[RMDB]
RNA sequence: GGGAACGACUCGAGUAGAGUCGAAAAUACCACUGCGUUAGUGACCAGCCCCAAUGCGCCCAGUUGAUCUUCCUGCCCCUCACGGUAGCGUUUUCUGAUCUCACCGCGCUGCCCGUAACAAAUUGCACGUGGUAAUCGAGUUCGCUCGAUUACCACGAAAAGAAACAACAACAACAAC
Reactivity to DMS in 0.01 (KOAc 150mM, MgCl2 10mM, bicine 150mM(pH8.5), 24C), signal-to-noise 2, nucleotides 027 to 126: u000a130c050c000a130c060u000g030c070g020u010u000a080g010u000g040a110c050c020a200g070c040c000c010c080a020a080u020g010c060g000c000c030c030a090g050u020u000g000a030u000c070u000u000c030c060u000g000c070c020c000c020u000c030a080c170g010g000u000a030g000c020g000u020u020u000u000c060u030g060a090u010c070u010c030a020c090c090g010c000g030c080u040g000c020c010c060g000u000a070a090c160a040a100a170u000u000g070c180a140
This 177-nucleotide RNA was probed chemically with DMS. For DMS, 1,035 sequencing reads were counted. Reactivities are given for positions 27 through 126.